[RMDB]
RNA sequence: GGGAACGACUCGAGUAGAGUCGAAAAGCGUACUACGCUCCUUACAGAGCUUGGAUUUAUACACGAGCUAUCCCAAAUAGGAUAGCGAGUGUAUUGUCAGCUCUGUUGGGAGCGUAUCGCAAACGGUUGUGCCUCAGUUCGCUGAGGCACAACCGAAACAAUUAGACUCGUUCGCGAGUCUAAUUGUAAAAGAAACAACAACAACAAC
Reactivity to 2A3 in 0.01 (KOAc 150mM, MgCl2 10mM, bicine 150mM(pH8.5), 24C), signal-to-noise 1, nucleotides 027 to 156: g000c000g040u100a130c080u000a000c020g000c000u000c000c000u010u020a000c000a000g010a030g020c030u130u160g120g000a110u220u300u020a010u020a000c010a010c000g010a020g000c000u000a000u040c030c000c010a220a290a080u250a110g000g000a000u000a000g000c000g000a000g000u000g000u010a000u000u000g000u020c000a000g000c000u000c000u010g000u000u000g000g010g000a000g030c000g000u020a000u110c000g000c000a000a090a030c030g000g000u000u000g000u030g000c000c010u000c000a030g010u110u130c190g020c080u000g000a000g000g000c000a000c000a000a000c000c000g000a000a000
Reactivity to DMS in 0.01 (KOAc 150mM, MgCl2 10mM, bicine 150mM(pH8.5), 24C), signal-to-noise 1, nucleotides 027 to 156: g000c000g020u010a070c090u000a040c010g010c000u000c010c000u000u000a010c000a010g010a000g010c000u010u000g010g010a030u000u000u000a000u000a000c000a010c040g000a300g010c000u000a000u020c030c000c000a060a180a270u010a060g020g000a030u000a020g010c000g020a210g010u000g010u000a000u000u000g010u010c000a060g030c010u000c000u000g030u000u000g000g040g020a020g000c000g010u000a000u000c000g060c000a080a090a210c020g040g030u000u000g030u000g060c000c010u000c000a040g020u000u000c300g000c000u000g000a020g040g000c000a000c010a000a020c000c010g010a020a050